RNA sequence: GGGAACGACUCGAGUAGAGUCGAAAACGCUGGGCUACCCACCUAGAUGACCAUCCUUUGAUCUACUGAAGCGCGCACGGUAGGGAGGAUGGUCUAGAGGCCUGUGCUGAAGCGCGCACGGCAACCGAAAGGUGCGACGAGGACAUUCGUGUCCUAAUAUAUCCCCGUAAUUCGUUACGGGGAUAUAAAAAGAAACAACAACAACAAC
Reactivity to 2A3 in 0.01 (KOAc 150mM, MgCl2 10mM, bicine 150mM(pH8.5), 24C), signal-to-noise 2, nucleotides 027 to 156: c040g000c040u140g030g000g000c000u080a190c000c000c000a010c000c020u000a000g020a120u170g130a040c000c000a000u000c000c000u300u300u040g040a030u040c000u000a000c000u020g060a280a030g010c030g000c000g000c000a030c040g020g000u020a000g000g050g000a010g000g010a000u010g010g000u010c010u000a000g010a010g050g000c010c040u080g050u150g020c000u050g040a100a020g040c000g000c010g000c090a040c000g000g060c060a060a020c060c050g110a090a150a050g030g000u060g050c060g030a070c030g110a120g000g000a000c010a030u080u100c230g040u050g040u000c000c000u000a170a000
Reactivity to DMS in 0.01 (KOAc 150mM, MgCl2 10mM, bicine 150mM(pH8.5), 24C), signal-to-noise 1, nucleotides 027 to 156: c100g070c050u060g030g050g050c020u000a120c030c020c080a300c080c030u010a080g000a060u000g030a150c020c010a000u000c030c010u000u000u000g010a100u000c000u000a060c010u050g010a030a030g060c010g020c000g050c030a300c040g000g020u000a030g000g000g030a030g020g000a040u010g010g020u000c030u010a010g000a140g020g010c000c030u000g010u030g000c000u000g000a080a050g020c020g060c060g010c010a300c020g030g020c010a080a130c080c050g010a130a060a190g010g020u000g030c020g000a100c060g010a060g010g000a020c010a080u000u010c250g000u010g000u000c000c000u000a080a060